[RMDB]
RNA sequence: GGGAACGACUCGAGUAGAGUCGAAAAGUGCGCUAGAACUGGAGACAGUCUGAGGGCGCGUUACGCUGAGCUGAGGCGUGAUGCCAACGGUGGUAGGCACUGGUAGCGUUACAGCUGUGACGCAUUACGCCGAAUGGACCUUCGGGUUCGUUCGGCGAAAAGAAACAACAACAACAAC
Reactivity to DMS in 0.01 (KOAc 150mM, MgCl2 10mM, bicine 150mM(pH8.5), 24C), signal-to-noise 9, nucleotides 027 to 126: g000u010g020c000g000c010u010a050g010a080a020c010u010g010g000a250g000a210c040a030g000u000c030u020g010a120g000g000g000c030g020c030g000u020u010a020c020g010c010u000g000a120g020c160u030g010a270g010g000c020g010u010g010a050u020g000c010c030a130a110c060g010g010u010g000g020u010a040g000g010c020a040c030u000g000g010u020a080g000c010g010u000u010a030c020a170g010c120u030g010u000g000a050c060g010c020a100u020u030a100
Reactivity to 2A3 in 0.01 (KOAc 150mM, MgCl2 10mM, bicine 150mM(pH8.5), 24C), signal-to-noise 9, nucleotides 027 to 126: g070u060g000c040g000c060u030a020g030a180a030c010u010g010g020a040g040a050c010a010g010u030c040u080g090a140g020g060g000c030g000c000g020u010u020a020c020g000c040u050g070a070g060c040u060g080a030g050g030c020g020u030g020a040u100g010c010c020a080a040c050g040g050u080g030g050u100a080g070g030c020a010c050u050g080g080u120a030g010c000g010u010u030a030c030a060g080c100u160g040u020g030a010c010g010c020a030u060u140a040